An RNA of 177 nucleotides, treated with DMS and 2A3 and read out base by base.
[RMDB]
RNA sequence: GGGAACGACUCGAGUAGAGUCGAAAAAGGAGAAGAUACAGGAGCUGCAGGAGAGCAAGCGCAAUCUGGUUUCGACUAUUCUCGACGGAGCAGAAGCCAAAUCCAGUCUCUCUGUGGAGGAAAUUCGAUGAAAAUAUCCAUUCGUGGAUAUUUUCAUAAAAGAAACAACAACAACAAC
Reactivity to DMS in 0.01 (KOAc 150mM, MgCl2 10mM, bicine 150mM(pH8.5), 24C), signal-to-noise 7, nucleotides 027 to 126: a060g010g000a080g000a070a030g010a090u010a080c110a080g000g000a110g010c040u010g000c060a100g010g010a090g010a110g010c080a070a070g010c080g000c070a060a060u030c030u010g010g010u010u000u000c000g010a090c080u000a090u010u010c020u000c010g000a070c060g000g000a070g020c130a050g000a060a050g010c070c090a040a090a080u010c100c080a080g010u020c020u010c020u000c020u010g000u000g000g010a070g000g000a040a060a110u000u020c070g010
Reactivity to 2A3 in 0.01 (KOAc 150mM, MgCl2 10mM, bicine 150mM(pH8.5), 24C), signal-to-noise 9, nucleotides 027 to 126: a000g120g020a050g010a070a030g010a040u120a120c050a040g050g020a040g020c010u030g020c040a020g010g090a050g020a000g030c030a100a030g020c020g010c070a030a060u050c040u070g080g000u020u020u040c020g020a030c030u060a090u170u030c020u010c020g070a060c040g020g010a020g010c060a020g040a080a020g060c040c040a070a060a040u080c050c020a040g090u020c010u000c000u000c010u040g030u050g040g030a030g000g090a020a080a090u150u100c070g010
It was measured as part of the RMDB library OK1LIB. The reactions ran in a buffer of 150 mM KOAc, 10 mM MgCl2 and 150 mM bicine (pH 8.5), at 24 C. For 2A3, 17,728 sequencing reads were counted.